About this RNA: This 207-nucleotide RNA was probed chemically with DMS and 2A3. Reactivities are rounded to 0.1 and cut off at 0 and 3. Reactivities are given for positions 27 through 156. It was measured as part of the RMDB library M2RFPK. The DMS profile rests on 1,905 reads. As a SHAPE reagent, 2A3 marks flexible, mostly unpaired nucleotides at the ribose 2'-OH. The 2A3 profile rests on 557 reads. The reactions ran in a buffer of 150 mM KOAc, 10 mM MgCl2 and 150 mM bicine (pH 8.5), at 24 C. For 2A3 the reverse transcriptase was SuperScript II with manganese.

[RMDB]
RNA sequence: GGGAACGACUCGAGUAGAGUCGAAAAAGAAUUGUACCACCACUGCGUAUCCUAAACGGGCUCUGCAGUGGUUAUUCUUGUAAAGUACUAGGAGUGAAUAGUGGCUCGUAUUGCAGGCAUUAACAUUAAAAGGCAAUCCACUUCGGUGGAUUGCCAAGAAUCAAACUUUCUUCGGAAAGUUUGAUUCAAAAGAAACAACAACAACAAC
Reactivity to DMS in 0.01 (KOAc 150mM, MgCl2 10mM, bicine 150mM(pH8.5), 24C), signal-to-noise 1, nucleotides 027 to 156: a030g010a090a050u010u010g050u020a100c070c070a110c000c000a030c000u000g000c030g060u000a050u000c020c010u000a010a130a160c230g000g000g020c090u010c050u010g050c030a010g000u000g000g000u020u000a010u010u000c010u000u030g020u000a090a100a130g000u000a030c030u000a060g000g000a050g040u010g020a090a110u000a080g000u010g050g030c020u000c040g010u000a070u010u010g000c060a060g030g020c030a080u010u000a060a150c060a110u010u010a060a040a110a230g080g000c000a020a000u000c000c010a030c020u010u000c300g000g030u000g010g010a010u010u010g020c020c000a000a010
Reactivity to 2A3 in 0.01 (KOAc 150mM, MgCl2 10mM, bicine 150mM(pH8.5), 24C), signal-to-noise 1, nucleotides 027 to 156: a000g050a040a040u130u030g080u150a070c010c040a000c000c000a000c000u000g010c000g000u070a050u070c010c020u060a230a220a140c130g030g000g000c030u000c200u300g000c020a000g010u000g000g000u010u010a000u000u000c010u000u110g050u050a010a080a230g010u040a040c090u150a060g020g100a030g030u040g070a060a060u020a100g090u100g030g000c010u000c030g000u060a100u040u110g000c010a020g020g000c010a050u110u070a130a050c020a080u110u130a240a110a000a000g000g010c010a010a010u000c000c000a010c050u010u040c100g020g000u010g010g000a000u000u000g000c010c000a000a000